Notes: An RNA of 177 nucleotides, treated with 2A3 and DMS and read out base by base. It was measured as part of the RMDB library OK1LIB. Conditions: 150 mM KOAc, 10 mM MgCl2 and 150 mM bicine (pH 8.5), 24 C.

RNA sequence: GGGAACGACUCGAGUAGAGUCGAAAAGAAAGAGCUGGCCAUAAUAGGCGUACGAGAAAAAUCGUACUAUUAUGAACGACUCGUGAGUAGAGACUGAAAAGUGAGAGCGAAUGUGUCGGAGCUCGAAGGGUUUACUAAUGUUCGCAUUAGUAAACCCAAAAGAAACAACAACAACAAC
Reactivity to 2A3 in 0.01 (KOAc 150mM, MgCl2 10mM, bicine 150mM(pH8.5), 24C), signal-to-noise 5, nucleotides 027 to 126: g100a010a060a010g020a000g000c040u060g010g090c030c000a010u000a020a000u020a030g140g040c080g020u030a000c060g010a010g200a070a290a080a050a060u040c010g000u000a060c000u000a000u020u000a010u010g050a070a020c020g060a030c010u010c030g030u040g010a010g010u080a030g020a020g030a030c030u050g090a070a070a030a000g110u100g090a140g020a010g080c020g020a100a020u060g040u000g020u060c030g040g030a010g000c000u000c020g010a050a060
Reactivity to DMS in 0.01 (KOAc 150mM, MgCl2 10mM, bicine 150mM(pH8.5), 24C), signal-to-noise 4, nucleotides 027 to 126: g010a100a080a180g010a010g000c000u000g030g010c090c000a000u000a010a010u000a010g000g010c130g050u020a010c040g000a040g000a090a090a080a110a130u000c010g000u000a070c010u010a000u000u000a010u000g000a290a140c020g010a040c020u000c010g000u010g010a250g010u010a070g000a130g020a090c000u000g010a090a060a080a020g000u000g000a120g000a300g000c030g010a080a060u010g000u010g000u000c010g000g000a080g020c000u000c020g010a090a070